[RMDB]
RNA sequence: GGGAACGACUCGAGUAGAGUCGAAAAAGGUAGUAUCAGUUCGUUUUCCACCUGAUCCUGCAAAAGCAGAGCUUGACGACGUCAAGGACACAAUCCGAGCUACUGUGUCCGCACUAAGCGAAGGAGCCGAGGCUUCUUGAUUCGUCAAGAAGCCUCGAAAAGAAACAACAACAACAAC
Reactivity to DMS in 0.01 (KOAc 150mM, MgCl2 10mM, bicine 150mM(pH8.5), 24C), signal-to-noise 1, nucleotides 027 to 126: a030g000g030u000a050g030u000a070u010c080a050g050u000u000c080g020u000u000u000u000c020c010a110c160c060u000g000a120u020c070c030u000g030c030a040a030a130a120g020c060a060g000a080g030c030u000u000g010a130c050g040a130c220g020u010c060a060a050g020g020a030c040a030c050a010a140u000c050c030g010a120g020c040u020a200c100u000g010u000g000u010c040c020g020c140a030c060u000a100a080g010c030g000a110a080g000g010a090g000c100